[RMDB]
RNA sequence: GGGAACGACUCGAGUAGAGUCGAAAAAGGUGGGACAGAGAUCCACCGUAGAGUGUAAGGGCAAAAGUUGGCCUGACUGUAUUUCGAUCAGCAAGAAAUUCAGAGGCGAAAGCCGGGCCUAGCGAACCGACCCCCGAAGAUUCGUCUUCGGGGGUCGAAAAGAAACAACAACAACAAC
Reactivity to DMS in 0.01 (KOAc 150mM, MgCl2 10mM, bicine 150mM(pH8.5), 24C), signal-to-noise 1, nucleotides 027 to 126: a150g000g000u000g000g000g000a090c080a080g010a250g050a130u050c000c000a020c000c000g000u050a010g000a030g040u000g000u000a110a110g000g000g020c040a160a160a050a020g010u010u000g000g000c060c000u000g000a210c000u000g030u000a030u000u000u000c030g030a160u060c110a160g000c090a050a200g000a000a040a040u000u000c000a000g010a300g000g000c000g000a080a040a170g020c040c000g000g000g000c000c000u010a090g010c040g040a010a130c150
Reactivity to 2A3 in 0.01 (KOAc 150mM, MgCl2 10mM, bicine 150mM(pH8.5), 24C), signal-to-noise 1, nucleotides 027 to 126: a000g000g000u000g000g050g030a100c150a190g100a000g000a060u150c000c000a000c000c000g010u030a050g050a040g030u090g040u120a020a050g040g000g020c000a000a000a100a190g090u050u090g040g010c140c030u020g030a050c020u000g000u050a010u000u000u000c030g020a160u020c000a020g060c020a120a000g000a020a000a000u030u000c000a000g050a000g090g000c000g010a070a000a000g010c020c000g000g000g000c000c010u010a090g040c000g000a000a000c040